An RNA of 177 nucleotides, treated with 2A3 and DMS and read out base by base. The data come from the RNA Mapping Database (RMDB), library OK1LIB.
RNA sequence: GGGAACGACUCGAGUAGAGUCGAAAAGCUAGCCUGCGCACGAUCUGACUGCCGUGAAGUCUACCCUGCGUCAGAACUAGUCUCCAUCAAUCAAAGCGCAGGGAUUGAUGUACGAGACUAGUACACAGUGUAAGGACUUCUUCGGAGGUCUUUACACAAAAGAAACAACAACAACAAC
Reactivity to 2A3 in 0.01 (KOAc 150mM, MgCl2 10mM, bicine 150mM(pH8.5), 24C), signal-to-noise 9, nucleotides 027 to 126: g040c050u050a010g020c000c000u020g000c010g000c010a050c050g060a080u040c030u060g060a040c010u020g020c010c010g030u040g050a060a010g020u000c020u030a060c000c000c010u030g040c020g090u070c050a030g030a070a010c000u000a000g000u000c000u000c000c000a000u000c000a000a000u000c010a040a070a060g040c030g010c040a020g020g000g000a000u000u000g000a000u000g030u060a070c100g000a000g000a000c000u000a000g010u050a020c080a000c010a020
Reactivity to DMS in 0.01 (KOAc 150mM, MgCl2 10mM, bicine 150mM(pH8.5), 24C), signal-to-noise 7, nucleotides 027 to 126: g020c060u010a070g010c010c000u010g010c020g010c030a170c110g000a060u010c060u010g000a060c020u010g000c020c040g010u010g010a070a060g000u010c040u010a100c010c020c010u010g010c070g010u020c100a090g010a080a020c000u000a010g000u000c000u000c010c020a010u000c000a000a000u000c010a070a070a090g010c040g000c030a040g000g000g010a010u000u000g000a010u000g000u060a100c210g000a010g010a020c000u000a000g010u000a040c150a070c140a090
Values cover nucleotides 27 to 126. For DMS, 33,158 sequencing reads were counted. The reactions ran in a buffer of 150 mM KOAc, 10 mM MgCl2 and 150 mM bicine (pH 8.5), at 24 C.